The record gives the reactivity of an RNA of 207 nucleotides to 2A3 and DMS. For DMS the reverse transcriptase was MarathonRT. For 2A3, 6,268 sequencing reads were counted.

RNA sequence: GGGAACGACUCGAGUAGAGUCGAAAAUUUGAGCAAGAAAACGGCACAGGGAGAAAAGGACUUAUCUGGUGAGAGAUUUGGCAUAUACCUUCAAUGUGUGCCCUAUAACACAACAUUGUCUCCGAUCUCAUCUUUCUAUCAAAUGACUUCCAACACACGAUUUACUCCAUUUCGAUGGAGUAAAUCGAAAAGAAACAACAACAACAAC
Reactivity to 2A3 in 0.01 (KOAc 150mM, MgCl2 10mM, bicine 150mM(pH8.5), 24C), signal-to-noise 7, nucleotides 027 to 156: u040u030u040g030a030g020c070a080a030g040a070a110a030a040c060g080g000c080a020c050a110g080g070g000a040g040a040a120a040a020g040g010a020c030u090u050a040u080c060u050g050g000u060g030a050g000a000g010a060u070u060u110g020g020c080a040u110a010u070a230c020c030u070u090c020a050a060u060g020u010g010u020g060c020c000c020u240a180u080a140a020c020a000c010a090a170c020a040u020u060g020u030c010u000c050c020g040a080u000c020u010c020a070u010c000u020u110u020c030u060a090u050c020a030a050a090u060g040a080c040u060u030c020c020a070a030c050a020c020a010
Reactivity to DMS in 0.01 (KOAc 150mM, MgCl2 10mM, bicine 150mM(pH8.5), 24C), signal-to-noise 2, nucleotides 027 to 156: u000u020u000g010a130g000c070a120a140g010a060a050a050a110c090g020g030c050a060c070a110g050g000g030a080g000a040a070a100a110g030g010a150c060u000u000a060u000c070u000g010g000u000g000a080g010a110g010a100u000u000u000g010g000c040a100u000a110u000a040c030c050u000u030c060a010a090u000g050u000g000u000g000c030c060c100u020a140u010a130a070c040a040c010a030a060c030a060u000u010g000u000c050u010c020c010g020a080u000c030u010c030a060u000c050u000u000u010c050u000a110u000c050a020a030a090u000g000a080c060u000u000c020c030a030a090c070a070c080a180

For DMS, 3,062 sequencing reads were counted.